[RMDB]
Structure probing data (DMS and 2A3) for a 207-nucleotide construct. The DMS profile rests on 3,611 reads.

RNA sequence: GGGAACGACUCGAGUAGAGUCGAAAAUUAAUGUCGUAUUUGAACAGAGCCUGUAACAUCUCAAUGUCUUUAUUAUCUAUAGCCAAUUUAAUGUCCGGAAUGAAGAGAAGGGAAUUAUUGGUGUUUGUCGACGUCAUAUAGUCGAGCAAGAGAAUCACAAUAGAGCCUUGUUCGCAAGGCUCUAUUGAAAAGAAACAACAACAACAAC
Reactivity to DMS in 0.01 (KOAc 150mM, MgCl2 10mM, bicine 150mM(pH8.5), 24C), signal-to-noise 2, nucleotides 027 to 156: u000u000a040a120u000g000u000c070g040u000a100u000u000u000g020a100a080c080a140g010a110g000c020c010u040g020u030a070a090c100a160u010c000u000c040a050a140u000g010u010c020u000u000u000a030u030u000a070u000c040u010a200u000a110g010c060c030a040a110u000u000u010a080a140u000g000u000c020c060g000g030a100a120u030g000a070a110g000a080g020a150a150g020g020g000a090a100u000u000a050u010u000g010g030u000g010u010u000u000g000u000c030g000a050c020g000u000c150a130u020a100u000a070g000u010c020g000a050g010c060a060a090g010a150g000a070a100u000c070a180
Reactivity to 2A3 in 0.01 (KOAc 150mM, MgCl2 10mM, bicine 150mM(pH8.5), 24C), signal-to-noise 3, nucleotides 027 to 156: u050u040a060a080u070g020u060c050g030u060a180u100u110u090g050a090a030c020a020g020a020g060c000c010u050g010u050a090a000c020a150u050c010u010c040a040a190u070g050u000c070u040u210u090a160u050u090a130u060c070u020a080u090a070g000c000c000a020a010u030u110u110a130a040u130g110u000c020c010g010g070a060a060u040g050a090a140g010a020g010a060a040g010g000g010a020a010u030u020a020u010u050g020g000u020g080u030u110u070g000u020c010g000a030c010g040u070c080a020u080a010u070a170g040u020c020g000a010g060c010a050a010g030a010g030a070a110u160c070a040